[RMDB]
RNA sequence: GGGAACGACUCGAGUAGAGUCGAAAAGGGAGUACGAGAUGGAACACGCCUGGGAUUACAGCAUCGUAUGGAAGGAAACACUCAAUCUCCUGAGGGGCGUCCUCAGCGAACAGGAGUUUCGCCUCUGGAAAAGGAAAGAUUUCGAUCUUUCCUUUUCAAAAGAAACAACAACAACAAC
Reactivity to 2A3 in 0.01 (KOAc 150mM, MgCl2 10mM, bicine 150mM(pH8.5), 24C), signal-to-noise 6, nucleotides 027 to 126: g030g000g010a030g000u040a040c070g010a010g030a180u050g040g050a130a020c040a020c110g050c000c020u050g010g070g040a030u060u130a150c060a090g060c030a060u040c070g240u060a050u160g020g040a050a050g030g050a070a060a000c020a000c020u010c000a040a110u020c010u000c010c000u010g000a030g000g020g000g020c020g020u020c010c000u020c020a060g060c030g070a080a020c030a080g100g030a030g000u020u060u040c020g010c000c010u000c020u030g080
Reactivity to DMS in 0.01 (KOAc 150mM, MgCl2 10mM, bicine 150mM(pH8.5), 24C), signal-to-noise 9, nucleotides 027 to 126: g000g010g010a050g010u010a080c260g010a050g020a110u000g010g010a070a110c110a120c140g010c030c010u010g000g010g010a070u000u000a070c170a090g010c150a050u000c050g010u000a030u010g010g020a080a050g000g010a100a080a090c050a040c020u000c030a110a210u000c030u010c010c010u000g000a040g010g000g010g010c040g010u000c120c010u000c050a120g010c080g000a030a080c150a090g000g010a070g010u000u000u000c020g010c010c020u000c040u000g010